[RMDB]
RNA sequence: GGGAACGACUCGAGUAGAGUCGAAAAUCAGAAUCAGGCCGGAGUGUUUAGCGCUCCGUAAAUACGGUCGUACAUCCAGCCGGUAGCCUGGUUCCUUGCAUUGAGUGAUGUACGGAGUUUAUAGAGCAAAAGAAAGACCUGUUCGCAGGUCUUUCAACAACAAGUGUUACUUCGGUAACACUUGUUGAAAAGAAACAACAACAACAAC
Reactivity to DMS in 0.01 (KOAc 150mM, MgCl2 10mM, bicine 150mM(pH8.5), 24C), signal-to-noise 2, nucleotides 027 to 156: u000c030a060g000a030a020u010c010a040g000g030c010c030g040g000a070g000u000g030u010u000u010a170g020c060g030c000u010c000c000g020u010a020a030a110u000a050c060g010g000u000c020g030u000a070c030a050u000c010c040a130g000c000c040g010g000u000a110g020c030c010u000g020g020u000u000c000c010u000u000g010c090a190u010u020g000a170g010u000g010a040u000g030u020a040c020g010g020a240g000u000u010u000a100u010a100g010a140g030c050a070a040a090a160g010a020a020a030g000a020c000c000u000g010u000u000c260g020c030a010g010g020u000c000u010u000u010c000a030a140
Reactivity to 2A3 in 0.01 (KOAc 150mM, MgCl2 10mM, bicine 150mM(pH8.5), 24C), signal-to-noise 4, nucleotides 027 to 156: u120c010a010g040a010a010u010c000a010g040g000c000c000g020g000a010g010u030g040u090u180u250a150g110c030g000c000u010c010c000g010u020a020a030a010u180a020c030g000g000u020c000g010u010a000c000a040u020c020c050a020g020c020c020g000g010u010a000g000c000c010u000g000g010u000u000c010c010u050u160g050c030a110u110u130g080a070g060u090g030a010u010g000u010a020c000g020g020a070g030u060u200u040a170u120a080g090a020g060c050a060a050a070a060g000a010a000a000g000a000c000c000u010g020u050u120c260g000c070a000g000g000u000c000u000u000u000c000a000a000